[RMDB]
RNA sequence: GGGAACGACUCGAGUAGAGUCGAAAAGAUAUGGAUUAUCCCGAUCUUGGAUUUACGAAUAUAUCGGAAACGAUAUAGGAGUUGUCAGAUCGGAUAAUCCUAAGUCAAACCGGUGUUCGCACCGGAAUCGCUAGGAAGUGUUCGCACUUCCUAGCGAAAAAGAAACAACAACAACAAC
Reactivity to DMS in 0.01 (KOAc 150mM, MgCl2 10mM, bicine 150mM(pH8.5), 24C), signal-to-noise 1, nucleotides 027 to 126: g020a040u000a300u000g000g000a040u000u000a000u010c050c010c020g020a000u000c000u000u000g030g030a010u030u000u000a010c010g080a300a160u000a000u000a000u020c000g030g000a080a090a150c020g000a040u000a000u000a000g030g000a300g030u000u000g000u000c000a000g000a000u000c000g000g000a020u000a000a000u000c010c000u000a010a060g000u020c010a060a060a080c090c000g010g010u000g000u000u010c260g000c000a000c020c000g040g000a050a030
Reactivity to 2A3 in 0.01 (KOAc 150mM, MgCl2 10mM, bicine 150mM(pH8.5), 24C), signal-to-noise 1, nucleotides 027 to 126: g010a000u060a020u120g000g010a000u000u020a000u090c120c150c050g010a000u060c040u160u210g300g020a090u300u300u250a020c000g000a030a000u000a010u010a000u020c030g010g000a070a070a020c010g030a000u000a000u000a010g000g030a040g010u010u010g000u040c020a020g000a010u030c000g060g010a000u000a000a010u000c010c000u020a060a020g050u000c030a000a060a130c000c010g000g000u010g040u060u190c300g000c100a000c000c000g000g000a010a060
Notes
The data come from the RNA Mapping Database (RMDB), library TTRDEL. An RNA of 177 nucleotides, treated with DMS and 2A3 and read out base by base. The DMS profile rests on 668 reads. For 2A3, 1,361 sequencing reads were counted. The RNA was probed in 150 mM KOAc, 10 mM MgCl2 and 150 mM bicine (pH 8.5) at 24 C.